[RMDB]
RNA sequence: GGGAACGACUCGAGUAGAGUCGAAAAAGAGGCUUCGGCCUCUGAAAGUCCUAAGUCAUCGCAGACUGGAGAAUGCGAACCAUUCGGAAACGAAUGGGAGGUAUAUUCGAUGAAAGUCGGGAGCGAUGAUAUGGAGAGCGGCCUGAUUCGUCAGGAAUUAAAAUGUGUAGUUCGCUACACAUUUUAAAAAAGAAACAACAACAACAAC
Reactivity to 2A3 in 0.01 (KOAc 150mM, MgCl2 10mM, bicine 150mM(pH8.5), 24C), signal-to-noise 3, nucleotides 027 to 156: a000g000a000g010g000c010u040u090c270g160g000c010c000u000c000u000g000a020a010a010g100u040c010c000u020a110a030g010u000c000a000u000c010g000c000a010g010a010c000u000g000g000a010g000a020a020u030g010c050g050a060a040c000c000a000u010u000c010g020g070a080a070a060c010g010a000a000u010g000g060g000a040g110g000u110a100u030a060u220u040c110g120a300u040g030a040a010a000g000u030c000g000g090g160a090g000c000g000a000u000g000a000u020a010u050g020g010a030g000a030g050c080g020g040c020c000u030g010a030u080u080c110g090u030c070a000g000g000a010a010
Reactivity to DMS in 0.01 (KOAc 150mM, MgCl2 10mM, bicine 150mM(pH8.5), 24C), signal-to-noise 3, nucleotides 027 to 156: a030g000a030g020g040c000u000u000c300g070g030c010c000u000c000u000g000a110a080a140g010u010c020c010u000a080a220g020u000c000a030u000c000g120c010a060g000a050c000u010g000g010a180g010a040a020u000g010c000g000a100a300c010c000a010u000u000c000g010g010a150a130a280c020g020a010a000u000g010g010g010a010g020g020u000a040u000a060u010u000c010g030a180u000g010a160a100a070g030u000c010g000g030g000a210g000c030g020a060u000g010a020u000a130u000g010g000a110g010a130g030c040g020g000c010c020u000g010a070u000u000c140g040u000c010a020g000g010a180a260

Source: RMDB library RNAMAK, as collected in RNAgym.
Structure probing data (2A3 and DMS) for a 207-nucleotide construct.
The RNA was probed in 150 mM KOAc, 10 mM MgCl2 and 150 mM bicine (pH 8.5) at 24 C.
Reactivities are rounded to 0.1 and cut off at 0 and 3.
Values cover nucleotides 27 to 156.
2A3 adducts were read by reverse transcription with SuperScript II with manganese.